[RMDB]
An RNA of 177 nucleotides, treated with DMS and 2A3 and read out base by base. The data come from the RNA Mapping Database (RMDB), library 15KREP. The RNA was probed in 150 mM KOAc, 10 mM MgCl2 and 150 mM bicine (pH 8.5) at 24 C.

RNA sequence: GGGAACGACUCGAGUAGAGUCGAAAAGGACAAUGAAAUUGUUAAGUCUUCAGAUGUUGUAGACAGCAAUGAAAAUUUAACAUGGCCACUUGUUUUAGAAUGCACUAGGGCAUCCACUUCUGCCGUUACUAUUCAUAGUGUUCGCACUAUGAAUAGUAAAAGAAACAACAACAACAAC
Reactivity to DMS in 0.01 (KOAc 150mM, MgCl2 10mM, bicine 150mM(pH8.5), 24C), signal-to-noise 4, nucleotides 027 to 126: g000g010a040c040a040a050u010g010a100a170a100u000u000g000u000u000a030a020g010u000c020u010u000c010a030g010a220u000g000u010u010g010u000a140g010a190c050a020g000c010a020a140u000g000a010a010a020a020u000u000u000a000a020c010a020u000g000g020c150c070a040c140u000u000g000u000u000u000u010a070g010a060a070u000g010c030a050c120u000a080g000g000g000c060a040u000c020c050a080c100u000u000c060u000g020c050c090g020u000u000
Reactivity to 2A3 in 0.01 (KOAc 150mM, MgCl2 10mM, bicine 150mM(pH8.5), 24C), signal-to-noise 3, nucleotides 027 to 126: g020g000a010c040a030a050u140g050a100a060a050u070u020g000u020u030a050a030g000u000c010u000u010c010a080g080a300u080g040u090u010g050u070a090g060a250c020a010g010c000a010a030u010g010a020a030a010a000u010u050u020a010a000c010a000u020g030g030c020c000a020c030u040u030g040u050u060u010u020a050g030a070a030u060g020c020a020c090u080a020g000g000g040c010a010u040c020c010a040c020u070u020c020u040g050c040c020g010u010u000
Description: For DMS, 3,948 sequencing reads were counted.